[RMDB]
RNA sequence: GGGAACGACUCGAGUAGAGUCGAAAAGGUGGAAGAGAACGCAUAGGUGAAACGGGGACAGUUUUAGGUCUUAACGCCCGUGACAGUAAACAUGCUGGAAGAAUGUUCAGCAUGCAUAAUUGCCAAAGAACGGCAUAAUUUUCGAAUUAUGCCGUUCAAAAGAAACAACAACAACAAC
Reactivity to 2A3 in 0.01 (KOAc 150mM, MgCl2 10mM, bicine 150mM(pH8.5), 24C), signal-to-noise 2, nucleotides 027 to 126: g090g020u040g040g030a020a020g080a000g020a130a000c070g000c030a020u050a060g010g090u070g020a050a010a000c020g040g020g040g050a030c040a070g020u030u040u030u060a050g000g030u050c040u050u040a040a010c060g020c000c050c000g040u000g010a020c010a010g060u130a020a100a000c000a000u020g010c000u010g060g050a000a020g200a170a100u170g040u090u000c000a000g010c020a000u000g000c000a000u080a050a110u100u070g020c020c000a090a120a000
Reactivity to DMS in 0.01 (KOAc 150mM, MgCl2 10mM, bicine 150mM(pH8.5), 24C), signal-to-noise 4, nucleotides 027 to 126: g020g030u000g000g010a070a070g010a080g020a090a070c130g010c090a080u000a080g010g010u010g010a030a080a060c050g000g000g000g010a090c030a070g000u000u000u020u000a080g010g000u000c080u010u000a150a090c100g010c010c010c020g020u000g000a040c030a030g020u000a110a130a160c010a000u000g000c000u000g000g000a010a170g010a070a120u020g010u000u000c010a010g000c000a000u000g000c070a110u000a120a060u000u010g010c010c020a080a060a130

An RNA of 177 nucleotides, treated with 2A3 and DMS and read out base by base. 2A3 adducts were read by reverse transcription with SuperScript II with manganese. Values cover nucleotides 27 to 126. The RNA was probed in 150 mM KOAc, 10 mM MgCl2 and 150 mM bicine (pH 8.5) at 24 C.